[RMDB]
RNA sequence: GGGAACGACUCGAGUAGAGUCGAAAAGGAUAGAGAAUGUAGUACCUUGUUCUACGGCGAUUGGGUGAAUCAACUCAACGUCGAUUGUCACGUUAUCACCAGGCAUUACCAUUUCAGUACCUGCUGGGAACCGAUAGAGUUUCGACUCUAUCGGUUCAAAAGAAACAACAACAACAAC
Reactivity to DMS in 0.01 (KOAc 150mM, MgCl2 10mM, bicine 150mM(pH8.5), 24C), signal-to-noise 3, nucleotides 027 to 126: g000g010a150u010a090g000a080g010a080a040u000g030u000a060g030u000a060c040c010u010u000g030u000u000c030u000a140c040g010g000c010g000a140u000u010g000g010g020u000g000a130a130u010c230a110a060c000u000c000a010a010c020g020u000c000g000a110u000u000g010u000c110a090c150g000u000u010a060u000c080a060c140c050a080g000g000c040a030u000u000a080c080c080a060u000u000u000c080a080g000u030a100c020c020u010g000c080u000g010g000
Reactivity to 2A3 in 0.01 (KOAc 150mM, MgCl2 10mM, bicine 150mM(pH8.5), 24C), signal-to-noise 1, nucleotides 027 to 126: g120g050a080u130a070g160a010g010a070a120u130g010u040a040g000u000a020c000c000u020u040g030u120u080c050u070a060c030g000g000c040g300a300u010u010g040g020g010u050g020a060a170u230c050a100a020c000u000c020a010a010c030g000u000c020g000a050u040u140g070u050c040a030c180g060u060u070a100u060c000a020c010c000a010g010g010c010a020u000u070a060c030c000a090u020u000u130c010a010g030u030a070c020c000u080g060c020u070g160g090
Source: RMDB library OK2TRN, as collected in RNAgym. This 177-nucleotide RNA was probed chemically with DMS and 2A3. For DMS the reverse transcriptase was MarathonRT. Values are in units of 0.01, from 0 to 300, in steps of 10. The 2A3 profile rests on 840 reads.